[RMDB]
RNA sequence: GGGAACGACUCGAGUAGAGUCGAAAACGAUGUGAAUCGGUGCGGCAGUGAGGGGAAAGCUCGCCUGAUCGAUAUCGUGGCCUGCCGUGCAAAGAUGCGCGCGCUGCGAGACAAUGGCGAAGGGGGAAGCAGUAGUAUCGUUCGCGAUACUACUGCUAAAAGAAACAACAACAACAAC
Reactivity to DMS in 0.01 (KOAc 150mM, MgCl2 10mM, bicine 150mM(pH8.5), 24C), signal-to-noise 3, nucleotides 027 to 126: c050g000a030u010g020u000g000a150a030u000c040g010g010u010g020c150g000g000c140a120g020u000g000a130g040g010g000g020a050a080a100g000c170u010c020g000c010c000u000g000a200u010c150g000a050u010a120u000c010g020u010g000g000c020c200u010g020c120c050g030u000g050c030a060a110a110g000a130u000g030c060g010c030g010c190g000c010u000g020c000g010a020g000a070c140a050a100u010g000g020c010g000a030a110g000g020g010g000g000a130
Reactivity to 2A3 in 0.01 (KOAc 150mM, MgCl2 10mM, bicine 150mM(pH8.5), 24C), signal-to-noise 3, nucleotides 027 to 126: c020g010a030u060g090u060g170a130a040u040c020g000g010u120g010c070g030g000c060a110g030u040g130a060g010g010g010g000a040a050a030g010c000u010c020g020c000c000u050g020a080u110c050g020a040u040a010u190c010g000u010g000g000c000c040u070g050c070c020g010u010g000c020a040a170a120g200a210u130g000c000g000c000g000c020g010c020u020g000c000g000a020g030a020c030a020a100u060g010g000c010g010a030a030g000g000g000g000g020a030